An RNA of 177 nucleotides, treated with 2A3 and DMS and read out base by base. The reactions ran in a buffer of 150 mM KOAc, 10 mM MgCl2 and 150 mM bicine (pH 8.5), at 24 C. For DMS, 2,038 sequencing reads were counted.

RNA sequence: GGGAACGACUCGAGUAGAGUCGAAAAACGCGCGCUACGGCGCGCGAAUUGUAAAGGUAUAUUUAGCCGUAAGGGCUUGUACUUCAAAAGAAGGUAUACCGAGGAAAGCAUAUCUACGGAUAUGCAACUGAAUUAUGGACUUCGGUCCAUAAUUCAGAAAAGAAACAACAACAACAAC
Reactivity to 2A3 in 0.01 (KOAc 150mM, MgCl2 10mM, bicine 150mM(pH8.5), 24C), signal-to-noise 2, nucleotides 027 to 126: a000c000g000c040g000c000g000c000u020a080c260g150g000c000g000c000g030c020g000a000a070u080u060g080u130a290a000a090g000g010u000a000u000a000u080u140u000a010g000c000c060g070u070a030a110g160g000g000c000u040u050g200u200a240c020u050u040c010a050a180a130a220g080a000a000g000g000u000a000u000a000c000c000g000a020g000g130a040a220a000g010c000a000u000a120u000c000u040a020c300g050g000a000u010a000u000g000c000a030a000
Reactivity to DMS in 0.01 (KOAc 150mM, MgCl2 10mM, bicine 150mM(pH8.5), 24C), signal-to-noise 1, nucleotides 027 to 126: a040c000g030c000g050c030g040c050u000a130c220g000g000c000g000c030g110c000g030a000a010u000u000g020u010a070a110a150g010g000u000a000u000a030u000u020u000a020g000c020c000g060u000a190a200g040g000g000c000u060u000g000u000a030c010u000u010c000a040a080a100a220g000a050a010g000g000u000a000u010a020c000c010g070a160g040g040a030a030a100g010c000a000u000a000u000c000u020a150c100g000g020a000u000a020u000g040c000a010a040